Conditions: 150 mM KOAc, 10 mM MgCl2 and 150 mM bicine (pH 8.5), 24 C. This 207-nucleotide RNA was probed chemically with DMS and 2A3. For DMS the reverse transcriptase was MarathonRT. 2A3 adducts were read by reverse transcription with SuperScript II with manganese. The 2A3 profile rests on 6,390 reads. Source: RMDB library RNAMAK, as collected in RNAgym. Reactivities are rounded to 0.1 and cut off at 0 and 3.

RNA sequence: GGGAACGACUCGAGUAGAGUCGAAAAGCGUACUACUAGCUGCUAACUUUCUUGGAUUUAUGGGUAUGCUUGUCCCAAAUAGGACAAGCACCCAUUGUCAGAAAGGACCCAGCUAGUAUCGCAAAUACCCAGUCUCGAUUCGUCGAGACUGGGUAAAGACGUAUAUGAUGUUCGCAUCAUAUACGUCAAAAGAAACAACAACAACAAC
Reactivity to DMS in 0.01 (KOAc 150mM, MgCl2 10mM, bicine 150mM(pH8.5), 24C), signal-to-noise 2, nucleotides 027 to 156: g020c030g000u010a070c140u000a050c010u000a000g020c000u000g000c040u030a160a300c010u000u000u000c030u000u000g050g020a050u000u000u000a040u010g010g020g000u010a110u000g020c010u010u000g020u000c010c000c030a040a180a270u010a030g000g030a020c000a000a010g050c000a040c020c000c000a010u000u000g010u000c010a040g020a030a010a030g020g000a220c300c300c000a030g000c000u000a010g020u000a000u000c000g000c020a050a080a170u000a060c000c000c000a010g000u000c010u000c000g000a080u000u010c300g020u010c010g000a060g000a000c000u000g000g000g000u000a000a000a040
Reactivity to 2A3 in 0.01 (KOAc 150mM, MgCl2 10mM, bicine 150mM(pH8.5), 24C), signal-to-noise 6, nucleotides 027 to 156: g000c020g040u110a080c060u010a000c000u000a030g000c010u010g020c010u040a100a050c000u020u020u040c030u120u210g200g010a110u300u300u080a020u050g010g000g020u130a110u170g000c000u000u000g010u010c010c000c020a170a300a180u240a070g010g000a000c000a000a000g000c000a020c000c000c000a000u000u000g000u000c000a000g000a000a000a000g010g010a020c000c010c000a000g000c000u010a000g000u000a000u000c010g000c000a000a070a010u050a000c000c000c000a000g030u000c000u000c000g020a040u050u060c230g040u000c000g190a000g000a000c010u000g000g000g000u000a000a000a010